[RMDB]
RNA sequence: GGGAACGACUCGAGUAGAGUCGAAAAAGGUGGCCGCGAUCUUCAAGGCUACGGCGCGGAUAGGUCCGCGCUGAUCGUUUUCCUCCAACGACGCUAUGGCGUCUUUCCAUCACCCGCAGGGGCGUUCAAAACUUCUCGAGGUUCGCCUCGAGAAGAACACCAAAUCGAAGUUCGCUUCGAUUUGGUGAAAAGAAACAACAACAACAAC
Reactivity to 2A3 in 0.01 (KOAc 150mM, MgCl2 10mM, bicine 150mM(pH8.5), 24C), signal-to-noise 1, nucleotides 027 to 156: a000g050g000u000g000g000c000c000g100c030g040a010u050c000u100u080c030a000a020g010g000c000u000a010c010g010g000c010g000c080g010g030a070u150a220g210g150u070c010c000g060c010g000c040u010g010a010u000c010g010u000u030u110u030c020c010u040c010c040a080a030c090g020a000c020g000c010u070a060u260g120g000c000g000u020c000u000u060u010c020c000a050u060c020a040c040c000c020g070c060a060g000g000g030g040c020g010u060u070c070a020a020a070a080c000u000u020c000u010c000g000a000g000g010u020u070c130g100c010c000u000c020g000a000g010a000a000g000a000a000

Overview: Conditions: 150 mM KOAc, 10 mM MgCl2 and 150 mM bicine (pH 8.5), 24 C. This 207-nucleotide RNA was probed chemically with 2A3. 2A3 adducts were read by reverse transcription with SuperScript II with manganese. The data come from the RNA Mapping Database (RMDB), library M2RFPK.